[RMDB]
Conditions: 150 mM KOAc, 10 mM MgCl2 and 150 mM bicine (pH 8.5), 24 C. The record gives the reactivity of an RNA of 177 nucleotides to DMS and 2A3. High 2A3 reactivity points to a flexible backbone, as in loops and unpaired stretches. DMS adducts were read by reverse transcription with MarathonRT. It was measured as part of the RMDB library VIROID.
RNA sequence: GGGAACGACUCGAGUAGAGUCGAAAACUCGUGGUUCCUGUGGUUCACACCUGACCUCCUGAGCAGAAAAGAAAAAAGAAGGCGGCUCGGAGGAGCGCUUCAGGGAUCCCCGGGGAAACCUGGAGCGGUCAAAUAGGUUGUUCGCAACCUAUUUGACAAAAGAAACAACAACAACAAC
Reactivity to DMS in 0.01 (KOAc 150mM, MgCl2 10mM, bicine 150mM(pH8.5), 24C), signal-to-noise 2, nucleotides 027 to 126: c010u000c010g030u000g000g010u010u000c030c010u000g070u000g010g010u000u000c160a110c150a090c030c050u000g010a190c010c000u010c020c010u030g010a010g000c020a110g030a080a100a060a190g000a040a060a020a110a110a110g030a110a150g010g000c080g020g000c050u000c000g000g000a020g000g000a130g000c040g020c000u000u000c010a050g000g000g010a300u010c000c020c060c200g000g010g040g000a020a070a220c000c000u000g010g020a010g000c010g010
Reactivity to 2A3 in 0.01 (KOAc 150mM, MgCl2 10mM, bicine 150mM(pH8.5), 24C), signal-to-noise 2, nucleotides 027 to 126: c000u010c010g010u050g040g000u040u050c000c010u040g030u080g070g020u130u130c060a050c010a020c110c050u120g130a160c010c000u020c010c050u200g020a010g020c010a020g130a080a170a090a010g220a040a220a060a070a000a020g100a060a030g130g080c100g040g000c020u010c000g000g010a000g000g000a010g010c020g000c010u020u000c000a000g020g000g000a010u030c000c000c000c020g220g000g000g000a030a020a000c000c000u000g040g000a000g000c030g010